Notes:
The record gives the reactivity of an RNA of 207 nucleotides to 2A3. The reactions ran in a buffer of 150 mM KOAc, 10 mM MgCl2 and 150 mM bicine (pH 8.5), at 24 C. Source: RMDB library OK3TST, as collected in RNAgym. 2A3 adducts were read by reverse transcription with SuperScript II with manganese.

RNA sequence: GGGAACGACUCGAGUAGAGUCGAAAAAAUACCUAGUUUGUAUUUGGCUCUGGGCUUACAAUAGUGAGGGAAGAGAAACCACAGACACAGUAGCUAAUAAGAAAUGUUAGCCAGGCACAGUGGCUCAUGCCUGUAAUCCCAGCACUUUAGGAGGAGGGUUCACUGUGAAGUUCGCUUCACAGUGAACAAAAGAAACAACAACAACAAC
Reactivity to 2A3 in 0.01 (KOAc 150mM, MgCl2 10mM, bicine 150mM(pH8.5), 24C), signal-to-noise 1, nucleotides 027 to 156: a000a000u130a050c010c010u000a070g040u020u080u180g070u050a170u110u070u040g030g000c070u040c030u060g000g010g010c030u010u040a080c000a180a300u120a130g030u090g060a040g000g040g050a090a030g040a030g020a210a000a000c060c000a020c020a000g090a020c000a000c000a100g110u150a020g000c020u010a030a000u020a110a040g270a140a130a040u140g050u030u020a000g000c010c000a010g040g000c000a000c000a040g000u050g000g020c000u000c010a000u110g020c000c030u020g000u000a000a000u000c000c040c050a000g010c030a050c100u100u120u100a060g020g000a000g060g010a010g010g030